[RMDB]
RNA sequence: GGGAACGACUCGAGUAGAGUCGAAAAGAUAUGGAGAGGAACUACGGAUGAUAGGGACGAAGAACUCGGAAACGAGGGAGUCCCUAGAGUCCGCCUCUCCUAAGUCAAACUCCUGUUCGCAGGAGAAUCACCUAGUAAGGUUCGCCUUACUAGGUGAAAAAGAAACAACAACAACAAC
Reactivity to 2A3 in 0.01 (KOAc 150mM, MgCl2 10mM, bicine 150mM(pH8.5), 24C), signal-to-noise 2, nucleotides 027 to 126: g020a010u090a040u120g000g010a010g010a010g080g000a110a070c170u180a040c300g020g000a000u030g000a010u040a020g030g000g000a010c030g130a300a140g000a050a040c020u000c000g030g050a070a040a030c010g000a000g000g000g020a010g010u000c000c000c000u000a010g000a000g000u000c010c000g000c000c000u000c010u000c000c000u000a000a000g020u010c010a030a050a170c010u010c000c010u020g040u040u100c300g000c070a000g000g000a010g020a020a130
Reactivity to DMS in 0.01 (KOAc 150mM, MgCl2 10mM, bicine 150mM(pH8.5), 24C), signal-to-noise 3, nucleotides 027 to 126: g000a020u000a300u000g000g000a020g000a020g000g010a100a070c080u030a300c060g000g000a000u010g030a300u010a010g010g010g020a030c000g000a110a110g010a110a190c000u010c000g000g010a060a110a150c020g000a000g010g000g000a070g030u000c000c000c000u000a000g000a230g000u000c000c000g000c000c000u000c000u000c000c000u000a000a020g020u000c080a080a140a140c000u000c000c000u000g000u000u010c180g030c010a000g000g010a010g000a060a090

This 177-nucleotide RNA was probed chemically with 2A3 and DMS. The DMS profile rests on 2,084 reads.